[RMDB]
RNA sequence: GGGAACGACUCGAGUAGAGUCGAAAAUUGUGGGCCUCUGCCCGUUACGAUUCAAGUUCGGGACCUCGAUAGGAGCGAUCCGUUUCCCGAUCACCGCGAACGCGGGCGGGUUCUCCAGGUAGUCGAUCCCUCGCUGGAGAGCUUCGGGGUCGUCACCUCAUAAUCUUAAGUUCGCUUAAGAUUAUGAAAAAGAAACAACAACAACAAC
Reactivity to 2A3 in 0.01 (KOAc 150mM, MgCl2 10mM, bicine 150mM(pH8.5), 24C), signal-to-noise 6, nucleotides 027 to 156: u130u110g020u100g030g000g000c030c010u100c100u150g000c000c010c020g010u030u040a060c040g060a250u040u060c070a130a030g020u000u020c000g010g010g030a070c040c060u090c100g110a150u130a260g100g020a030g030c050g050a080u050c040c020g010u090u240u030c000c010c000g000a030u050c050a040c080c100g070c090g050a070a020c050g000c000g020g000g000c010g010g000g000u000u010c010u000c010c010a020g040g020u060a060g050u110c020g020a050u020c000c010c010u000c040g020c010u040g030g110a100g010a010g040c000u100u150c100g020g000g000g000u000c000g020u030c010a030c010c010
Reactivity to DMS in 0.01 (KOAc 150mM, MgCl2 10mM, bicine 150mM(pH8.5), 24C), signal-to-noise 3, nucleotides 027 to 156: u000u000g000u000g000g000g000c000c030u000c030u000g020c000c010c000g040u000u020a050c050g000a200u000u010c090a140a130g030u010u010c020g020g010g020a080c120c040u000c080g010a160u010a140g010g000a110g010c250g010a100u000c020c030g000u000u000u000c010c010c020g030a050u000c060a090c070c080g000c040g000a040a060c150g020c020g010g010g030c060g010g030g000u000u000c020u000c000c020a000g010g010u010a110g020u010c050g000a080u000c090c130c000u000c190g000c020u000g010g000a110g010a080g010c020u000u010c140g030g000g040g010u000c010g010u000c020a020c030c020